[RMDB]
RNA sequence: GGGAACGACUCGAGUAGAGUCGAAAAGAUAUGGAACCGCUAGCUUUUGACGCCUCGCUCGGAAACGAGAUGAGGGCGAUAAGCUAGGGUUCCUAAGUCAAAACGAGAGUGCUUCGGCACUCUCGAAUCAAACAAAAAAGUUCGCUUUUUUGUUUGAAAAAGAAACAACAACAACAAC
Reactivity to 2A3 in 0.01 (KOAc 150mM, MgCl2 10mM, bicine 150mM(pH8.5), 24C), signal-to-noise 4, nucleotides 027 to 126: g010a000u040a030u090g000g010a000a010c020c020g150c300u010a010g000c010u190u150u170u300g230a130c040g040c000c000u000c020g020c000u000c010g000g000a040a030a020c020g010a010g050a140u130g020a290g030g080g020c010g040a050u050a090a000g000c000u000a000g000g000g000u000u010c000c000u000a010a000g010u000c020a010a030a090a110c040g000a000g010a000g000u010g010c000u090u140c220g070g000c000a000c010u010c000u000c000g000a000a000
Reactivity to DMS in 0.01 (KOAc 150mM, MgCl2 10mM, bicine 150mM(pH8.5), 24C), signal-to-noise 4, nucleotides 027 to 126: g000a030u000a300u000g000g000a010a010c000c000g020c000u000a000g010c000u000u000u010u010g020a210c240g000c000c000u000c000g010c000u000c000g010g000a090a060a120c010g010a010g000a040u020g000a090g010g000g020c010g000a080u010a010a020g010c000u000a010g000g010g010u000u000c000c000u000a000a040g010u000c030a080a070a120a220c010g010a010g000a010g020u000g010c000u000u010c210g020g000c000a000c000u000c000u000c000g000a030a070

Background: Structure probing data (2A3 and DMS) for a 177-nucleotide construct. For 2A3 the reverse transcriptase was SuperScript II with manganese. It was measured as part of the RMDB library TTRDEL. The DMS profile rests on 5,432 reads. The RNA was probed in 150 mM KOAc, 10 mM MgCl2 and 150 mM bicine (pH 8.5) at 24 C.